[RMDB]
RNA sequence: GGGAACGACUCGAGUAGAGUCGAAAACCUAUCCAAAAUGAGAUCCCAUCUUGCACACUGUGCGAAUUUGAGAUUCUCAUGCCUCCUACUUGGAGAGAUCUGGACUAGAAGUCAGGGCAUCUGACUCAAUACAUUCGUCAGUUCGCUGACGAAUGAAGUGGACCAAUAAGUUCGCUUAUUGGUCCACAAAAGAAACAACAACAACAAC
Reactivity to DMS in 0.01 (KOAc 150mM, MgCl2 10mM, bicine 150mM(pH8.5), 24C), signal-to-noise 2, nucleotides 027 to 156: c020c010u000a110u000c050c020a040a040a180a090u000g000a020g020a070u020c000c000c000a050u000c090u010u000g000c030a060c020a110c140u030g050u010g000c000g010a000a030u000u000u000g000a000g000a000u000u000c010u000c000a040u000g000c000c010u000c000c000u000a160c200u000u000g050g030a080g020a130g000a110u010c050u000g000g010a210c120u010a160g000a090a060g010u000c050a040g030g000g010c170a090u010c010u000g010a030c000u000c010a080a090u000a210c050a050u010u000c000g040u000c000a010g020u000u000c300g030c010u000g000a000c000g010a010a000u000g010a030a120
Reactivity to 2A3 in 0.01 (KOAc 150mM, MgCl2 10mM, bicine 150mM(pH8.5), 24C), signal-to-noise 6, nucleotides 027 to 156: c000c000u010a070u030c010c000a050a060a000a110u010g000a000g000a000u000c000c000c010a010u020c010u010u050g000c000a020c030a070c140u280g010u020g020c030g080a080a080u020u010u030g050a050g000a020u280u070c000u000c000a000u040g030c010c000u000c000c000u120a290c120u180u300g010g000a020g000a010g000a050u090c080u120g010g000a010c010u040a080g050a170a010g060u000c000a000g010g030g230c080a110u110c100u000g000a000c000u000c030a030a070u070a140c010a010u000u000c000g010u000c000a010g010u030u110c190g010c090u000g000a000c000g000a000a000u000g000a050a010
An RNA of 207 nucleotides, treated with DMS and 2A3 and read out base by base. The data come from the RNA Mapping Database (RMDB), library M2RFPK. For 2A3, 4,231 sequencing reads were counted. For 2A3 the reverse transcriptase was SuperScript II with manganese. For DMS the reverse transcriptase was MarathonRT. Conditions: 150 mM KOAc, 10 mM MgCl2 and 150 mM bicine (pH 8.5), 24 C.